[RMDB]
RNA sequence: GGGAACGACUCGAGUAGAGUCGAAAACUUUACUCUUCGGAGUAAAGAAAAACCGUAGGACAACUCCCCACCGAAGCAGGACGAAGAACUUCGAAAGAGGGGAGUCCUGCAAUUCGAGGUUGUCCUAAACGGAAAAAGCUGAUAUUCGUAUCAGCAACAUAGCUCAAUACUUCGGUAUUGAGCUAUGAAAAGAAACAACAACAACAAC
Reactivity to 2A3 in 0.01 (KOAc 150mM, MgCl2 10mM, bicine 150mM(pH8.5), 24C), signal-to-noise 1, nucleotides 027 to 156: c010u000u010u020a020c010u000c040u070u060c280g090g000a030g010u030a030a030a010g010a090a200a010a000a010c030c030g030u070a000g000g000a000c000a010a010c040u120c030c030c010c020a000c000c010g020a000a000g110c000a000g010g000a010c000g080a300a100g000a000a040c020u040u030c030g090a100a070a040g020a020g000g090g000g010a000g010u000c000c010u000g000c030a050a300u060u040c000g010a030g010g000u000u000g000u000c000c000u010a090a050a050c020g000g110a060a050a030a030a030g000c000u010g020a010u010a040u070u300c300g000u030a000u020c000a000g000c000a000a000
Description:
An RNA of 207 nucleotides, treated with 2A3 and read out base by base. It was measured as part of the RMDB library RNAMAK.